[RMDB]
Source information
Chemical mapping of a 207-nucleotide RNA with 2A3.
RNA sequence: GGGAACGACUCGAGUAGAGUCGAAAAGGGUGAUGUUUCCUAACCUUUAUCAAUGGGGGCACUCGGUCGUGCUGUGGGUAGAAAUUUUAUUUCGUGCCUACCUUAGACGCUUGUCGUCGGGAGUAUGUGGGACUGAUGAACUUCGGUUCAUCAGUAAGAGGAGCUAUGAGUUCGCUCAUAGCUCCUCAAAAGAAACAACAACAACAAC
Reactivity to 2A3 in 0.01 (KOAc 150mM, MgCl2 10mM, bicine 150mM(pH8.5), 24C), signal-to-noise 2, nucleotides 027 to 156: g050g010g030u000g030a050u040g000u020u000u030c000c000u050a030a110c030c000u060u160u140a180u150c090a130a120u100g000g000g000g000g000c020a000c030u070c050g000g000u050c030g010u040g020c080u100g030u060g010g000g000u040a020g090a030a000a010u130u180u120u110a230u000u210u040c050g020u100g000c000c000u010a010c000c000u040u020a070g030a010c000g010c120u200u190g060u300c030g010u030c020g010g060g000a040g060u150a040u110g070u180g010g000g020a000c020u000g000a000u000g000a030a000c000u020u010c240g070g030u000u000c000a000u000c000a000g000u000a040a000

The RNA was probed in 150 mM KOAc, 10 mM MgCl2 and 150 mM bicine (pH 8.5) at 24 C.